Chemical mapping of a 177-nucleotide RNA with 2A3 and DMS. Conditions: 150 mM KOAc, 10 mM MgCl2 and 150 mM bicine (pH 8.5), 24 C. For DMS, 1,119 sequencing reads were counted.
[RMDB]
RNA sequence: GGGAACGACUCGAGUAGAGUCGAAAAUCAAUGUAGACGAGCUAAGGAAAGACUCCCACCACUACAGGACAGUGGUCAGUAGAAUAGAGAAAAAAUAUACCGUUCUAGUCAUGAUGCCAGAGCAUGAGAUCGCUUGAAAAUUCGUUUUCAAGCGAUCAAAAGAAACAACAACAACAAC
Reactivity to 2A3 in 0.01 (KOAc 150mM, MgCl2 10mM, bicine 150mM(pH8.5), 24C), signal-to-noise 1, nucleotides 027 to 126: u040c020a010a060u130g020u100a020g040a080c030g020a010g030c040u060a090a050g050g020a130a070a050g010a040c040u000c040c030c020a000c020c000a020c000u120a040c000a060g200g060a030c030a080g060u000g000g000u020c020a010g040u040a010g050a060a070u120a030g080a000g070a060a160a010a000a030a000u180a000u040a090c010c030g010u000u060c020u010a030g020u010c020a020u040g040a000u070g080c030c030a060g010a020g020c010a020u060g020a020
Reactivity to DMS in 0.01 (KOAc 150mM, MgCl2 10mM, bicine 150mM(pH8.5), 24C), signal-to-noise 2, nucleotides 027 to 126: u010c050a080a100u000g030u000a030g020a100c040g020a090g020c050u010a060a110g010g000a060a070a120g010a120c100u000c020c050c040a060c050c000a030c030u000a100c090a080g040g000a150c150a040g040u020g010g040u000c020a040g020u000a020g010a080a030u010a070g020a090g020a000a020a090a050a020a030u000a070u010a090c070c040g000u000u000c030u010a030g000u000c030a040u010g020a040u000g000c080c010a090g000a130g000c080a030u000g010a150